[RMDB]
The record gives the reactivity of an RNA of 177 nucleotides to DMS and 2A3. Source: RMDB library OK2TST, as collected in RNAgym. Conditions: 150 mM KOAc, 10 mM MgCl2 and 150 mM bicine (pH 8.5), 24 C.

RNA sequence: GGGAACGACUCGAGUAGAGUCGAAAAUGACUCGGAAGGUUUUGACACGUUGAGUUGGCUUUGAAGACUUGGUUCUUAAGAGACGUUUCGAUUCUGGACCGAUGCGAACGGACCGUUUUAUACAUCGGUAGAAGGUAUGGUUCGCCAUACCUUCUACAAAAGAAACAACAACAACAAC
Reactivity to DMS in 0.01 (KOAc 150mM, MgCl2 10mM, bicine 150mM(pH8.5), 24C), signal-to-noise 6, nucleotides 027 to 126: u010g000a030c010u000c050g010g010a100a160g010g020u000u000u010u000g010a100c090a060c060g000u000u010g010a130g010u010u010g010g000c050u000u000u010g000a100a090g010a040c030u010u000g030g010u000u010c020u010u010a090a130g010a100g010a070c050g010u000u000u000c040g000a150u000u000c040u000g010g010a180c060c010g000a040u010g010c120g000a040a070c050g000g000a120c170c070g000u000u000u010u010a100u000a170c100a050u000c090g020
Reactivity to 2A3 in 0.01 (KOAc 150mM, MgCl2 10mM, bicine 150mM(pH8.5), 24C), signal-to-noise 2, nucleotides 027 to 126: u080g000a000c010u010c030g010g040a030a040g050g010u000u040u050u150g060a020c040a000c080g010u040u090g020a040g030u050u040g130g050c050u070u040u120g100a050a010g010a010c020u090u120g080g010u230u050c030u050u060a070a020g030a000g000a050c030g020u030u020u000c030g040a050u050u000c020u090g020g080a050c000c020g020a040u110g010c010g060a050a000c010g020g020a020c020c020g010u010u000u070u050a170u040a060c100a070u090c030g080